[RMDB]
RNA sequence: GGGAACGACUCGAGUAGAGUCGAAAACUAUGUACAGACAGUACAGUGGAUAAGGUCUUUCGAUAUCCAACUUUAACAAUGGUACUUGCAGUGGUAUCUAUCAAGAUAGGCAGGCUAUCAUAGAAAGAAGAUGUUUAUUAUUCGUAGUAAGCAUCUUAAAAGAAACAACAACAACAAC
Reactivity to 2A3 in 0.01 (KOAc 150mM, MgCl2 10mM, bicine 150mM(pH8.5), 24C), signal-to-noise 9, nucleotides 027 to 126: c030u050a070u150g010u000a010c010a100g220a050c050a070g080u010a000c000a010g010u010g010g000a000u000a030a030g080g040u010c010u000u010u010c000g000a000u000a000u000c000c020a070a140c120u120u140u130a110a030c060a040a030u030g000g000u000a000c000u010u020g000c020a090g070u140g200g070u100a010u000c000u010a200u120c080a100a020g000a010u020a010g070g000c010a000g000g000c030u020a000u010c000a010u010a090g020a000a010a000g000
Reactivity to DMS in 0.01 (KOAc 150mM, MgCl2 10mM, bicine 150mM(pH8.5), 24C), signal-to-noise 9, nucleotides 027 to 126: c020u010a060u030g010u000a010c010a120g010a150c260a140g010u000a010c010a030g010u000g000g000a010u000a010a030g000g010u010c010u000u000u000c000g010a090u000a000u000c000c010a040a110c060u000u010u040a080a090c170a040a210u010g000g010u000a020c010u000u000g010c020a110g020u030g010g020u010a010u000c000u000a100u060c260a070a020g010a010u000a020g000g010c010a010g000g010c250u000a010u000c010a010u000a030g000a020a010a020g010